Source: RMDB library OK3TST, as collected in RNAgym. An RNA of 207 nucleotides, treated with 2A3 and read out base by base. 2A3 adducts were read by reverse transcription with SuperScript II with manganese. The RNA was probed in 150 mM KOAc, 10 mM MgCl2 and 150 mM bicine (pH 8.5) at 24 C.
RNA sequence: GGGAACGACUCGAGUAGAGUCGAAAAACUAAACUUUUUACAGCCCCAAUAUUUAUUUAUUGGUGCUUCCAACACACCCUAUUAUAUUCUGCAAAUUUAUAUUCUGCAAAUCACUAUUUGGUGGAUAUUUACAAAUUCUCUACAAAUGGCUUGUAUACUAUAGUAGUCAGUUCGCUGACUACUAUAGAAAAGAAACAACAACAACAAC
Reactivity to 2A3 in 0.01 (KOAc 150mM, MgCl2 10mM, bicine 150mM(pH8.5), 24C), signal-to-noise 2, nucleotides 027 to 156: a000c010u110a020a010a100c050u150u200u130u270u180a120c050a000g020c040c040c000c000a010a010u020a050u010u120u020a190u100u150u000a000u050u040g000g000u000g000c000u020u080c150c050a060a000c030a020c000a020c060c000c010u000a020u140u060a080u020a020u130u050c060u070g020c010a020a020a090u030u300u070a240u170a110u130u090c090u000g010c000a000a000a040u040c020a040c040u080a030u130u060u000g020g000u000g020g020a010u030a030u170u150u040a100c020a000a060a030u100u040c050u030c020u150a060c010a080a160a070u090g010g040c050u030u090g130u130a100u090a130